This 177-nucleotide RNA was probed chemically with 2A3 and DMS. For 2A3, 1,019 sequencing reads were counted. For DMS, 1,315 sequencing reads were counted.
RNA sequence: GGGAACGACUCGAGUAGAGUCGAAAACUCCGCCAGCUCGGUGGCAAAGGAGGAUUUGGUUCCAUGCUUCGAGCCAUUGGUGCGCAAAUUGAAAAGACAACCAAUCGCGAGGCUUGCCGCGAUCUAAACUACCAGCACCAUUCGUGGUGCUGGUAGUAAAAGAAACAACAACAACAAC
Reactivity to 2A3 in 0.01 (KOAc 150mM, MgCl2 10mM, bicine 150mM(pH8.5), 24C), signal-to-noise 1, nucleotides 027 to 126: c020u010c000c000g070c020c010a000g000c010u010c010g000g140u130g060g000c000a040a050a070g120g040a070g000g080a070u080u060u280g260g000u070u050c030c000a020u030g010c010u010u010c000g020a030g000c020c000a060u090u150g000g000u030g020c090g000c020a020a050a110u080u100g030a200a010a010a010g060a020c070a030a040c080c000a040a010u010c000g000c010g050a010g040g080c060u070u100g060c030c000g040c010g000a000u080c020u130a110a090
Reactivity to DMS in 0.01 (KOAc 150mM, MgCl2 10mM, bicine 150mM(pH8.5), 24C), signal-to-noise 2, nucleotides 027 to 126: c040u000c040c010g000c100c070a160g010c020u000c060g000g040u000g030g030c030a010a110a180g020g020a100g010g000a140u010u000u000g030g000u020u000c040c030a220u000g000c030u000u010c010g000a060g030c030c250a110u000u000g000g020u000g020c080g000c060a070a090a130u010u000g010a070a040a040a060g030a100c050a060a020c060c150a100a070u000c030g000c030g000a070g000g010c060u010u000g000c040c000g020c020g040a020u000c110u000a090a130